[RMDB]
RNA sequence: GGGAACGACUCGAGUAGAGUCGAAAAGAGUCGAUAAAGAACGCGAGAUGCGUAUAUUUAUCAGGGGACAUCUGCUUUUAAUAGCAAGGCACGGGAAGUGUUGAUGUUUUGGAAGACCUAUUGUGAACCGAUUUCUCAAUUUCGAUUGAGAAAUCGGAAAAGAAACAACAACAACAAC
Reactivity to DMS in 0.01 (KOAc 150mM, MgCl2 10mM, bicine 150mM(pH8.5), 24C), signal-to-noise 2, nucleotides 027 to 126: g020a080g000u020c090g030a030u000a000a010a000g000a100a050c010g000c010g000a190g040a090u040g000c000g000u010a030u040a100u000u000u000a000u010c010a120g000g000g000g000a030c000a040u000c000u020g000c010u000u010u030u030a030a300u000a060g000c020a100a050g000g010c020a000c030g000g000g020a120a150g000u010g000u000u020g000a060u000g030u010u000u020u010g000g000a160a070g010a140c030c040u010a100u020u000g020u010g010a120a200
Reactivity to 2A3 in 0.01 (KOAc 150mM, MgCl2 10mM, bicine 150mM(pH8.5), 24C), signal-to-noise 4, nucleotides 027 to 126: g040a000g010u090c030g040a010u050a000a000a000g050a050a000c030g030c070g030a120g090a240u300g050c000g010u030a080u000a010u170u000u000a030u020c030a020g000g040g000g020a000c000a060u040c040u020g010c020u040u020u030u050a070a200u080a050g010c040a040a010g020g000c000a000c050g030g050g110a150a090g040u010g000u030u030g010a070u020g030u010u010u050u030g010g050a040a060g040a080c000c030u110a210u110u130g060u050g050a050a040
This 177-nucleotide RNA was probed chemically with DMS and 2A3. For DMS the reverse transcriptase was MarathonRT. Reactivities are given for positions 27 through 126. High 2A3 reactivity points to a flexible backbone, as in loops and unpaired stretches. It was measured as part of the RMDB libraries RFM100 and RFMREP. The 2A3 profile rests on 1,652 reads.